[RMDB]
About this RNA:
Structure probing data (2A3) for a 207-nucleotide construct. Source: RMDB library OK3TST, as collected in RNAgym. The RNA was probed in 150 mM KOAc, 10 mM MgCl2 and 150 mM bicine (pH 8.5) at 24 C. For 2A3 the reverse transcriptase was SuperScript II with manganese.
RNA sequence: GGGAACGACUCGAGUAGAGUCGAAAAGAAACAUCUGUAUCUACAUAAUGGGAUAUCUUGGUGGUGGGACUUAAGUCUAAACACAAAAUUCAUUUAUGCCUCAUACACGUAGCUGGAAGGUAAUUUUAUAAAAUACCUUUAAUGAUUUUGUGUGUGACGUAUGCAUCGUCUUCGGACGAUGCAUACGAAAAGAAACAACAACAACAAC
Reactivity to 2A3 in 0.01 (KOAc 150mM, MgCl2 10mM, bicine 150mM(pH8.5), 24C), signal-to-noise 1, nucleotides 027 to 156: g050a000a040a010c020a060u010c000u030g020u020a070u030c000u020a150c070a130u190a220a090u140g000g000g020a040u050a050u100c100u050u000g020g000u000g070g020u050g000g110g040a030c020u050u150a070a010g000u000c030u070a160a080a020c150a010c020a010a000a000a000u070u030c000a050u020u060u130a050u180g000c050c020u100c040a020u070a140c030a000c130g050u030a050g000c020u060g070g020a000a050g000g000u040a000a120u060u130u010u090a200u170a130a050a020a000u080a000c000c000u000u020u070a020a000u010g030a000u000u010u000u000g000u000g010u000g020u030g010a050